RNA sequence: GGGAACGACUCGAGUAGAGUCGAAAAUUACAUUAAAGGUGGUCGCGUAGAUUAUGGCGCAGCACAUGCAGCUAAAUACGGACAUGAGCGCUAUGGUAAGACUUAUAAAGGAAUCAUGCCUAAUUGGACACUGUAGCUUUUUCGAAAGCUACAGUGUAAAAGAAACAACAACAACAAC
Reactivity to 2A3 in 0.01 (KOAc 150mM, MgCl2 10mM, bicine 150mM(pH8.5), 24C), signal-to-noise 6, nucleotides 027 to 126: u050u030a010c050a040u120u170a150a090a030g150g000u020g040g020u020c010g010c020g060u010a030g020a120u090u120a080u180g020g000c000g000c010a010g030c060a050c030a180u030g040c020a020g010c040u070a020a060a050u090a060c070g010g010a020c000a040u100g000a000g000c050g000c030u060a110u090g000g050u040a100a040g040a050c030u100u040a090u120a250a170a010g050g050a010a060u130c030a040u100g000c000c000u110a180a120u150u120g050g000
Reactivity to DMS in 0.01 (KOAc 150mM, MgCl2 10mM, bicine 150mM(pH8.5), 24C), signal-to-noise 8, nucleotides 027 to 126: u020u040a080c110a090u020u020a060a110a110g000g000u000g010g010u000c020g020c070g020u010a040g000a080u010u020a030u020g010g010c020g000c020a080g020c190a100c120a040u010g000c040a120g010c050u020a050a070a080u030a110c070g010g000a110c040a040u000g010a060g020c020g020c030u010a030u020g010g000u000a050a070g020a080c080u020u010a090u020a050a080a070g010g010a090a050u010c070a040u010g010c010c010u000a080a110u020u010g000g000

Conditions: 150 mM KOAc, 10 mM MgCl2 and 150 mM bicine (pH 8.5), 24 C. The record gives the reactivity of an RNA of 177 nucleotides to 2A3 and DMS. The data come from the RNA Mapping Database (RMDB), library OK1LIB. For 2A3 the reverse transcriptase was SuperScript II with manganese.